Description
An RNA of 177 nucleotides, treated with 2A3 and read out base by base. Reactivities are given for positions 27 through 126. The RNA was probed in 150 mM KOAc, 10 mM MgCl2 and 150 mM bicine (pH 8.5) at 24 C. Reactivities are rounded to 0.1 and cut off at 0 and 3. The data come from the RNA Mapping Database (RMDB), library RFM100.
[RMDB]
RNA sequence: GGGAACGACUCGAGUAGAGUCGAAAAACGGUGGUCACUUACGAGUGACCACCGAGGCCAUGAUAUUGUCCUGUCACAGCAGUACUGGUUCCGAGUUACUGCUGCUUCGGGACAUGACCAUGGCCAAGCGGUACACCCUUUUCGAAGGGUGUACCGCAAAAGAAACAACAACAACAAC
Reactivity to 2A3 in 0.01 (KOAc 150mM, MgCl2 10mM, bicine 150mM(pH8.5), 24C), signal-to-noise 2, nucleotides 027 to 126: a000c030g000g000u010g000g000u000c000a000c000u000u020a050c220g140a010g020u000g000a010c010c000a000c000c000g000a000g000g000c000c000a010u020g000a020u020a030u080u000g000u010c000c020u020g020u040c020a000c000a030g000c000a000g030u000a010c000u050g130g210u190u210c130c080g080a030g020u190u060a000c000u000g000c000u000g000c000u060u090c010g000g000g000a000c000a000u030g010a010c030c000a000u000g000g000c000c020a010a010